An RNA of 177 nucleotides, treated with 2A3 and DMS and read out base by base. DMS adducts were read by reverse transcription with MarathonRT. For 2A3, 8,738 sequencing reads were counted. The RNA was probed in 150 mM KOAc, 10 mM MgCl2 and 150 mM bicine (pH 8.5) at 24 C.
[RMDB]
RNA sequence: GGGAACGACUCGAGUAGAGUCGAAAACAUGGAGUCUUCGGACUCCAUGCACUACCGAAAUAAUGCCUCGGUAUAAAAGGCAAACCCUUGGAAACAAGGGAUCGAUGUCACGAUUCGUCGUGACAAAACUAAUCGAUCGAUUCGUCGAUCGAUUAGUAAAAGAAACAACAACAACAAC
Reactivity to 2A3 in 0.01 (KOAc 150mM, MgCl2 10mM, bicine 150mM(pH8.5), 24C), signal-to-noise 5, nucleotides 027 to 126: c000a000u010g000g000a000g010u010c020u060u080c300g080g000a010c010u020c010c000a000u000g000c000a040c020u030a010c000c000g030a030a050a070u200a080a060u100g010c000c000u010c010g010g000u040a050u160a200a070a010a010g020g000c020a030a030a230c000c000c000u000u000g000g020a040a050a000c010a000a000g020g000g000a010u080c060g080a040u090g000u010c000a000c010g020a010u040u060c180g080u010c000g010u070g000a000c000a000a000a000
Reactivity to DMS in 0.01 (KOAc 150mM, MgCl2 10mM, bicine 150mM(pH8.5), 24C), signal-to-noise 4, nucleotides 027 to 126: c000a000u000g000g010a010g010u000c000u000u010c170g030g000a010c000u000c000c000a000u000g000c050a170c020u000a030c000c000g010a060a100a090u020a120a120u010g010c000c000u000c000g010g000u000a080u010a010a020a030a010g010g010c010a050a100a150c000c000c010u000u000g000g000a180a090a200c000a000a010g000g010g000a040u000c140g010a120u010g000u000c000a010c000g010a030u000u000c150g000u000c000g010u010g000a000c000a010a030a060